Chemical mapping of a 177-nucleotide RNA with 2A3 and DMS. Reactivities are given for positions 27 through 126. For DMS, 11,263 sequencing reads were counted. For DMS the reverse transcriptase was MarathonRT.
RNA sequence: GGGAACGACUCGAGUAGAGUCGAAAACAUCACCGCAAUCCUGUCGGUCUCCUUGAGCCGCGUGUGGGCCGCGUUGUAGAGCCGUGUGGUGCCUUCCGCAUAGCAGGCGGUCACGGCGAGUGCGGGGUCUCACACACACAUUCGUGUGUGUGUGAGAAAAAGAAACAACAACAACAAC
Reactivity to 2A3 in 0.01 (KOAc 150mM, MgCl2 10mM, bicine 150mM(pH8.5), 24C), signal-to-noise 3, nucleotides 027 to 126: c010a060u120c040a010c050c000g010c030a020a050u050c030c030u130g100u220c030g020g040u040c050u040c050c050u060u150g070a020g030c030c020g040c040g020u140g030u100g030g060g010c000c000g010c040g100u060u300g230u190a140g020a030g090c020c030g010u000g010u030g020g100u050g100c030c020u070u070c020c010g030c040a010u060a040g030c020a000g040g040c010g000g030u040c000a010c030g000g040c050g030a040g030u020g000c000g010g000g050g020
Reactivity to DMS in 0.01 (KOAc 150mM, MgCl2 10mM, bicine 150mM(pH8.5), 24C), signal-to-noise 6, nucleotides 027 to 126: c110a110u010c080a110c010c010g010c030a050a060u010c020c040u000g000u000c020g010g010u010c050u000c040c120u000u010g000a100g020c020c020g000c050g020u000g040u010g020g010g010c020c010g020c020g010u000u010g010u010a110g010a200g010c010c020g030u000g020u000g010g020u010g010c110c100u000u000c030c030g000c070a050u010a100g020c050a090g010g010c020g010g010u000c010a010c010g010g000c070g000a060g010u000g010c010g010g000g010g000